[RMDB]
RNA sequence: GGGAACGACUCGAGUAGAGUCGAAAAGCCCAGGGAGCUGCGCGCGCAACCACUCGGGCUGUGGCUCCGGUGACCGCUCUCCCUGGCAACGGUUUGUUCCUAGCAACCAGCCUGAGGUCUGGAGGUGGUGCGGAGGGAGCCGCCUAGGGACCAGGGAUGAUUACUGGAGUUUCGACUCCAGUAAUCAAAAAGAAACAACAACAACAAC
Reactivity to 2A3 in 0.01 (KOAc 150mM, MgCl2 10mM, bicine 150mM(pH8.5), 24C), signal-to-noise 3, nucleotides 027 to 156: g060c000c010c000a000g000g020g000a030g000c230u060g000c070g010c010g030c030g010c070a100a110c040c020a040c050u180c050g010g010g000c050u090g070u110g260g000c030u030c100c030g020g010u020g010a090c020c010g000c000u000c000u000c020c000c000u000g010g000c020a050a040c050g060g000u080u100u070g030u060u100c000c000u020a040g050c040a030a070c050c020a020g080c010c010u110g020a230g050g020u040c010u040g190g030a020g020g010u030g010g010u020g000c090g160g020a060g040g000g000a000g000c000c010g000c000c000u050a060g030g040g000a000c020c000a010g010g000g010a050

The record gives the reactivity of an RNA of 207 nucleotides to 2A3. Source: RMDB library OK3TST, as collected in RNAgym. The RNA was probed in 150 mM KOAc, 10 mM MgCl2 and 150 mM bicine (pH 8.5) at 24 C. For 2A3, 2,358 sequencing reads were counted.